Structure probing data (2A3 and DMS) for a 207-nucleotide construct. For DMS, 2,888 sequencing reads were counted.
RNA sequence: GGGAACGACUCGAGUAGAGUCGAAAAACCGUCAUAUACGUAUGACCGAAUGAGCAUAACAGGGCCACCCCAAAGCGUUCACAUUGUGGCCCCUGUCAGAUUCUGGUAAAUCUGCGAGUUCUGCUAAAUUAGGUAACUCUCUUCGGAGAGUUACCAACAGUUCUGUAUUCUUCGGAAUACAGAACUGAAAAGAAACAACAACAACAAC
Reactivity to 2A3 in 0.01 (KOAc 150mM, MgCl2 10mM, bicine 150mM(pH8.5), 24C), signal-to-noise 4, nucleotides 027 to 156: a000c010c000g000u010c010a020u040a010u040a050c120g080u040a020u030g010a010c020c020g070a130a090u180g020a050g010c040a030u010a150a010c020a040g010g000g000c010c000a000c000c030c010c050a120a090a040g120c090g080u160u150c100a090c070a200u100u230g000u010g010g000c010c000c020c010u030g030u050c000a000g020a090u100u020c020u260g040g070u080a050a060a030u020c030u020g010c020g040a060g060u050u020c040u040g040c020u090a080a150a200u200u170a100g000g000u000a000a000c000u000c000u020c000u070u040c090g030g000a000g000a000g000u010u000a000c000c000a000a000
Reactivity to DMS in 0.01 (KOAc 150mM, MgCl2 10mM, bicine 150mM(pH8.5), 24C), signal-to-noise 2, nucleotides 027 to 156: a090c030c040g000u000c030a070u000a030u000a060c200g020u000a050u000g010a010c050c020g020a110a070u000g020a120g040c020a080u010a040a100c070a070g000g000g000c020c010a060c020c010c070c000a060a160a180g000c090g000u010u000c090a060c120a150u010u020g000u000g010g000c020c000c010c010u000g010u000c000a010g020a040u000u000c050u000g020g020u010a100a060a030u000c010u000g020c040g030a180g050u000u000c080u000g000c030u020a100a070a160u000u000a130g020g000u000a030a020c000u000c010u000c000u000u000c290g090g010a000g000a020g020u000u000a010c000c000a020a100